Chemical mapping of a 177-nucleotide RNA with 2A3 and DMS.
DMS adducts were read by reverse transcription with MarathonRT.
Reactivities are given for positions 27 through 126.
For DMS, 711 sequencing reads were counted.
For 2A3 the reverse transcriptase was SuperScript II with manganese.
The RNA was probed in 150 mM KOAc, 10 mM MgCl2 and 150 mM bicine (pH 8.5) at 24 C.
RNA sequence: GGGAACGACUCGAGUAGAGUCGAAAAGAGUGGCUAACGAUCGAGAGUGCUCGGACCAUCGUGGACCUUGUGACACAUGGCACACUUGCAACAGUGGGGGAGGACAAUAUCCCACUCGGAACCUACGUCGAGGAGGCGAAUUCGUUCGCCUCCUCGAAAAAGAAACAACAACAACAAC
Reactivity to 2A3 in 0.01 (KOAc 150mM, MgCl2 10mM, bicine 150mM(pH8.5), 24C), signal-to-noise 1, nucleotides 027 to 126: g020a000g020u020g000g050c050u050a160a000c050g010a020u110c110g020a050g000a020g160u050g060c000u040c050g060g010a090c070c040a070u080c070g020u060g010g200a230c020c140u150u250g140u270g080a000c000a000c010a030u000g010g000c040a010c000a020c070u000u160g090c070a090a040c000a050g000u140g020g020g040g040g000a050g010g060a020c000a040a010u050a060u100c030c010c000a000c000u030c000g030g000a000a000c000c020u020a030c050g070
Reactivity to DMS in 0.01 (KOAc 150mM, MgCl2 10mM, bicine 150mM(pH8.5), 24C), signal-to-noise 2, nucleotides 027 to 126: g000a030g010u020g030g000c210u000a070a130c160g010a150u030c100g010a090g040a090g030u000g000c050u000c030g030g030a130c050c050a030u010c300g040u010g000g000a080c030c100u030u000g020u000g000a170c050a070c050a040u000g010g030c080a090c030a010c050u000u010g040c070a080a060c060a070g010u000g000g000g000g000g010a260g010g010a040c210a040a100u000a060u000c080c000c000a110c060u000c040g010g010a200a190c050c000u000a040c090g000